[RMDB]
The record gives the reactivity of an RNA of 177 nucleotides to DMS. The reactions ran in a buffer of 150 mM KOAc, 10 mM MgCl2 and 150 mM bicine (pH 8.5), at 24 C. The data come from the RNA Mapping Database (RMDB), library RFMREP. The DMS profile rests on 863 reads.
RNA sequence: GGGAACGACUCGAGUAGAGUCGAAAACCCCCCCCUCCCGGGAGAGCCAUAGUAGUCUGCGGAACCGGUGAGUACACCGGAAUUGCCAGGACGACCGGGUCCUUUCCAUUGGAUCAAACCCGCUCAACUUAAAUCUGUAGUUCGCUACAGAUUUAAGAAAAGAAACAACAACAACAAC
Reactivity to DMS in 0.01 (KOAc 150mM, MgCl2 10mM, bicine 150mM(pH8.5), 24C), signal-to-noise 1, nucleotides 027 to 126: c020c000c000c010c020c000c020c000u000c020c000c030g010g020g000a060g010a070g010c040c070a090u010a060g010u010a070g010u000c030u000g000c110g020g000a130a120c010c010g030g000u000g020a270g010u010a050c030a010c000c010g010g000a050a060u010u030g010c060c040a260g030g000a040c030g000a010c070c090g000g000g000u000c000c050u000u000u000c040c040a100u000u020g010g000a030u000c080a050a070a170c030c020c030g000c080u000c080a060a260